[RMDB]
RNA sequence: GGGAACGACUCGAGUAGAGUCGAAAAGGCGAGAGGUUUGUCCUGGUCCACGCAAGGCAGAUAGGGGAGAUAGUGCUUCUCUUAUGAGAAGGGCGUCGUGAACACAGUUAAGUGGCUCGUCUGUAGCCCAACGAUAUUAGUUCGCUAAUAUCGUUGGAAAAGAAACAACAACAACAAC
Reactivity to 2A3 in 0.01 (KOAc 150mM, MgCl2 10mM, bicine 150mM(pH8.5), 24C), signal-to-noise 6, nucleotides 027 to 126: g020g000c020g010a020g010a000g090g030u080u140u130g070u130c010c000u040g010g040u000c020c010a020c020g040c030a030a050g060g000c020a030g020a120u170a070g040g040g040g010a080g020a030u120a130g090u060g090c000u020u000c010u000c000u060u220a230u280g050a030g000a030a020g030g030g000c020g010u050c030g010u060g040a050a010c120a000c010a070g020u100u100a190a050g010u040g100g000c000u000c010g030u010c030u030g100u080a070g040c000
Reactivity to DMS in 0.01 (KOAc 150mM, MgCl2 10mM, bicine 150mM(pH8.5), 24C), signal-to-noise 7, nucleotides 027 to 126: g020g000c030g010a020g010a140g010g000u010u000u010g010u000c070c020u000g010g000u010c030c040a060c080g000c100a100a070g010g010c050a050g010a090u010a070g010g010g010g000a160g020a090u010a080g030u000g010c020u000u000c000u000c010u010u010a140u010g010a050g010a040a030g000g010g010c020g000u000c020g010u000g010a080a080c060a060c050a090g010u010u010a070a110g020u010g010g010c020u000c020g020u000c020u000g000u000a120g010c110